[RMDB]
The record gives the reactivity of an RNA of 177 nucleotides to 2A3 and DMS. DMS adducts were read by reverse transcription with MarathonRT. Values are in units of 0.01, from 0 to 300, in steps of 10. The 2A3 profile rests on 1,122 reads. For 2A3 the reverse transcriptase was SuperScript II with manganese.

RNA sequence: GGGAACGACUCGAGUAGAGUCGAAAAGGUGCUAUGUUCGAAGAGGGUUUUCCUUCUGAGGACGUAGGAUUAGAUUGGAUACAAGUCGUAACAAGGUUGCUGUAGGAGAACCUGCAGCAGGAUCAGUACAAGUCAUUACGUUCGCGUAAUGACUUGUAAAAGAAACAACAACAACAAC
Reactivity to 2A3 in 0.01 (KOAc 150mM, MgCl2 10mM, bicine 150mM(pH8.5), 24C), signal-to-noise 1, nucleotides 027 to 126: g120g000u180g040c000u020a000u000g000u000u020c000g000a020a010g050a010g120g010g020u090u050u170u300c000c000u000u000c000u000g010a020g020g000a000c000g000u000a000g040g000a010u010u060a030g070a090u020u050g100g040a000u030a090c020a090a000g040u040c040g050u050a090a070c050a110a050g080g010u130u010g000c000u010g000u000a010g030g060a220g050a270a230c010c000u000g030c020a000g000c000a000g000g020a030u110c030a000g090u000
Reactivity to DMS in 0.01 (KOAc 150mM, MgCl2 10mM, bicine 150mM(pH8.5), 24C), signal-to-noise 2, nucleotides 027 to 126: g020g010u000g000c000u010a000u010g010u000u000c000g000a300a020g000a030g000g020g000u000u010u040u000c000c010u000u000c010u000g010a300g010g010a010c000g020u000a000g000g000a020u000u000a110g000a300u020u010g000g000a170u000a080c050a070a000g020u010c070g010u000a010a150c010a130a120g030g000u010u000g030c000u000g040u010a000g010g010a300g010a120a100c020c000u000g000c060a000g020c010a030g010g000a090u000c050a130g030u000